[RMDB]
RNA sequence: GGGAACGACUCGAGUAGAGUCGAAAAGAGGGCUAUUCUAUGUAAGUAUGAGGAGACACAAAUGGCGGCUUUUCAUAUUUUCUUCUGCAAUUUCAUAUAGAAAAGGUGGUAGUCGUCCAGAUCAUAACAUAUACUAUAUGUUCGCAUAUAGUAUAUGAAAAGAAACAACAACAACAAC
Reactivity to 2A3 in 0.01 (KOAc 150mM, MgCl2 10mM, bicine 150mM(pH8.5), 24C), signal-to-noise 9, nucleotides 027 to 126: g090a040g000g030g000c030u060a070u130u050c040u050a100u180g080u130a050a100g030u030a090u100g030a020g060g050a060g060a020c050a010c040a140a150a040u140g050g030c060g020g030c010u110u090u200u270c020a010u030a030u040u020u020u000c000u060u040c040u030g050c050a080a120u050u170u130c050a090u210a020u060a180g030a020a020a010a010g060g000u020g010g030u040a000g000u010c010g020u040c010c020a030g010a080u110c030a050u060a120a030
Reactivity to DMS in 0.01 (KOAc 150mM, MgCl2 10mM, bicine 150mM(pH8.5), 24C), signal-to-noise 6, nucleotides 027 to 126: g010a060g000g020g010c040u000a030u020u010c040u020a050u010g010u010a060a070g010u000a040u020g000a060g010g010a050g000a060c040a090c140a080a080a080u030g010g020c050g010g010c010u010u010u030u040c000a010u000a030u010u000u000u010c010u010u010c110u000g010c200a080a100u020u050u010c060a070u020a100u020a040g000a010a010a030a050g000g070u000g000g010u010a010g000u000c010g000u010c010c060a070g010a090u020c070a030u010a070a150
The record gives the reactivity of an RNA of 177 nucleotides to 2A3 and DMS.
The RNA was probed in 150 mM KOAc, 10 mM MgCl2 and 150 mM bicine (pH 8.5) at 24 C.
For DMS the reverse transcriptase was MarathonRT.
The data come from the RNA Mapping Database (RMDB), library OK1LIB.
The 2A3 profile rests on 6,314 reads.